RNA sequence: GGGAACGACUCGAGUAGAGUCGAAAAUGGCAUAAAAACUAUUUGCACAUAGAGAUGGUCAUCCGUCUUGCUUCUGUGCAAAUAGUUACUGCCCGAAAGGGUAGUAGGUAGCUUCCGCAAGGGACUAUAAUUUCGUUUUCUUCGGAAAACGAAAUUAAAAAGAAACAACAACAACAAC
Reactivity to 2A3 in 0.01 (KOAc 150mM, MgCl2 10mM, bicine 150mM(pH8.5), 24C), signal-to-noise 5, nucleotides 027 to 126: u090g040g030c060a070u170a110a180a000a000a010c000u000a000u000u000u000g010c000a000c000a000u070a020g020a010g000a010u010g030g030u210c080a230u230c060c010g040u000c000u020u070g080c060u100u070c030u030g000u000g000c000a000a000a000u000a000g000u000u000a000c000u000g000c000c000c020g050a070a060a060g020g000g020u030a010g000u010a020g060g030u060a010g020c050u050u040c000c010g080c050a050a060g040g000g000a010c030u030a020
Reactivity to DMS in 0.01 (KOAc 150mM, MgCl2 10mM, bicine 150mM(pH8.5), 24C), signal-to-noise 5, nucleotides 027 to 126: u020g010g020c050a120u020a050a050a080a100a030c000u000a000u000u000u000g000c000a000c000a020u020a110g000a010g000a000u000g000g000u020c290a200u040c020c010g000u000c000u010u010g030c160u020u020c200u000g000u000g010c010a010a000a000u000a010g010u010u000a000c020u000g000c000c000c000g010a070a090a130g010g010g020u000a010g000u000a050g010g010u020a070g000c080u000u010c010c020g020c180a080a090g000g000g000a160c050u010a090